[RMDB]
An RNA of 177 nucleotides, treated with DMS and 2A3 and read out base by base.
The RNA was probed in 150 mM KOAc, 10 mM MgCl2 and 150 mM bicine (pH 8.5) at 24 C.

RNA sequence: GGGAACGACUCGAGUAGAGUCGAAAAUGAAUCGUGACAGUGGUAGAUCUAGCAAGGGGUUCUAUCGUAAACGGCCGGAUAGAACCCUGUGCACGUGGUCCGCCCACGGCUGUCGGGUUUAGGCCAACGAUUUUCUCAGAUUCGUCUGAGGAAGUCGAAAAGAAACAACAACAACAAC
Reactivity to DMS in 0.01 (KOAc 150mM, MgCl2 10mM, bicine 150mM(pH8.5), 24C), signal-to-noise 3, nucleotides 027 to 126: u010g010a000a000u010c020g010u020g010a010c000a010g020u010g000g020u000a200g000a160u060c090u000a300g000c000a300a300g000g000g000g000u000u000c000u000a000u000c000g000u030a020a050a070c160g010g010c020c030g000g000a000u000a020g000a000a010c000c000c010u000g010u010g000c010a080c050g020u000g010g000u010c100c130g000c030c020c230a020c050g010g000c010u000g000u000c010g010g000g000u000u000u000a050g020g010c010c010a090a170
Reactivity to 2A3 in 0.01 (KOAc 150mM, MgCl2 10mM, bicine 150mM(pH8.5), 24C), signal-to-noise 8, nucleotides 027 to 126: u080g010a010a010u040c060g090u080g010a000c000a010g010u030g060g090u160a120g060a300u140c080u110a060g040c070a300a300g000g000g000g000u000u000c000u000a000u000c000g050u080a050a090a110c070g010g000c000c010g040g000a000u000a000g000a000a000c000c000c000u010g000u010g000c020a010c020g010u000g000g020u020c070c240g020c020c000c000a000c000g010g000c000u000g000u010c000g010g000g000u020u020u030a040g000g000c000c000a010a010